[RMDB]
RNA sequence: GGGAACGACUCGAGUAGAGUCGAAAACGUUUUCCCGACCUCGGGAUACCCUGUCCCUUUAUGCUGACCUGGACGACGGCGCUGGAAGAACAGACCAAAAGCCAGAGCGAGGCUUUCCGUAAAGACCCCUCACAUAGUUCUUCGGAACUAUGUGAGGAAAAGAAACAACAACAACAAC
Reactivity to DMS in 0.01 (KOAc 150mM, MgCl2 10mM, bicine 150mM(pH8.5), 24C), signal-to-noise 2, nucleotides 027 to 126: c260g000u000u000u000u000c000c000c020g000a160c100c110u070c020g010g050g030a090u020a030c050c040c090u080g000u010c050c000c000u050u070u020a000u010g060c110u010g010a200c090c000u030g000g000a140c050g000a160c190g010g070c090g060c000u000g000g000a130a160g020a200a100c090a030g000a130c060c040a100a090a110a150g000c020c000a010g030a070g040c030g030a240g020g010c020u000u000u000c000c040g010u010a090a100a040g020a120c030c170
Reactivity to 2A3 in 0.01 (KOAc 150mM, MgCl2 10mM, bicine 150mM(pH8.5), 24C), signal-to-noise 4, nucleotides 027 to 126: c090g020u060u000u050u000c030c010c010g070a140c010c060u050c030g010g030g030a010u070a100c010c000c030u030g060u100c040c000c030u030u070u040a100u080g000c020u030g030a120c020c000u030g040g020a040c020g000a020c040g070g030c120g000c080u010g020g060a090a070g020a250a010c030a020g080a070c040c010a100a040a000a020g020c010c010a030g000a020g080c030g030a030g000g000c000u010u030u000c020c040g090u090a010a050a120g040a050c000c020
This 177-nucleotide RNA was probed chemically with DMS and 2A3.
For DMS the reverse transcriptase was MarathonRT.
The data come from the RNA Mapping Database (RMDB), library OK1LIB.
Conditions: 150 mM KOAc, 10 mM MgCl2 and 150 mM bicine (pH 8.5), 24 C.